[RMDB]
RNA sequence: GGGAACGACUCGAGUAGAGUCGAAAACAUGCGUGCCCGUGUACUCCCCCAUGCUCCGGGCCAGCAUCAGUUCUGGCGGUUGGUUAAAGGCCUCUGGAAUGUAUCGUCCUCCGGGACGUCUUAUAGCCUAUGCUUGACAGUUCGCUGUCAAGCAUAGAAAAGAAACAACAACAACAAC
Reactivity to DMS in 0.01 (KOAc 150mM, MgCl2 10mM, bicine 150mM(pH8.5), 24C), signal-to-noise 2, nucleotides 027 to 126: c120a060u000g010c030g010u000g020c020c000c010g000u000g020u000a040c060u000c030c010c010c020c000a300u000g000c030u000c240c010g010g000g020c010c040a100g010c020a050u010c160a140g010u000u010c030u000g000g030c070g000g010u000u010g020g000u000u030a110a170a180g000g000c030c000u000c020u000g000g000a030a010u010g020u010a110u010c000g010u000c010c000u010c270c150g030g020g010a020c030g000u000c040u000u000a080u000a160g010c200
The record gives the reactivity of an RNA of 177 nucleotides to DMS. Conditions: 150 mM KOAc, 10 mM MgCl2 and 150 mM bicine (pH 8.5), 24 C. DMS adducts were read by reverse transcription with MarathonRT.